Structure probing data (2A3 and DMS) for a 177-nucleotide construct. DMS (dimethyl sulfate) methylates the pairing face of unpaired adenines and cytosines. Values cover nucleotides 27 to 126.
RNA sequence: GGGAACGACUCGAGUAGAGUCGAAAAGAUAUGGAUCUGAUGGAGCGAAUGUAUUCGGAAACGAAUACUUCGCUAUGAAGUCAGAGUCCUAAGUCAGCAGUGUAAUCAUCUUCGGAUGAUUACACAAGUCACUGCUUUAGUUCGCUAAAGCAGUGACAAAAGAAACAACAACAACAAC
Reactivity to 2A3 in 0.01 (KOAc 150mM, MgCl2 10mM, bicine 150mM(pH8.5), 24C), signal-to-noise 1, nucleotides 027 to 126: g030a000u020a020u050g020g000a000u000c010u030g010a010u020g000g040a010g000c000g000a020a020u210g000u010a020u000u000c000g000g000a000a020a000c000g000a010a000u000a000c000u010u000c000g000c010u020a100u010g000a000a000g020u000c000a000g020a020g230u060c010c010u000a000a000g010u000c010a010g120c150a060g000u020g000u000a000a010u000c010a010u000c030u060u140c260g190g000a000u000g010a000u000u020a000c000a000c000a000a010
Reactivity to DMS in 0.01 (KOAc 150mM, MgCl2 10mM, bicine 150mM(pH8.5), 24C), signal-to-noise 2, nucleotides 027 to 126: g000a020u010a070u000g000g000a230u000c000u000g000a020u000g000g010a000g040c000g000a010a000u020g030u000a010u000u000c010g000g010a000a010a040c000g000a000a010u000a000c000u000u000c000g020c010u000a040u040g000a130a220g020u000c000a010g000a040g020u020c000c000u010a000a090g000u000c000a200g020c180a150g010u010g010u010a000a000u000c000a000u000c000u000u010c260g030g000a030u000g030a000u000u000a010c000a010c000a000a080
The DMS profile rests on 1,710 reads.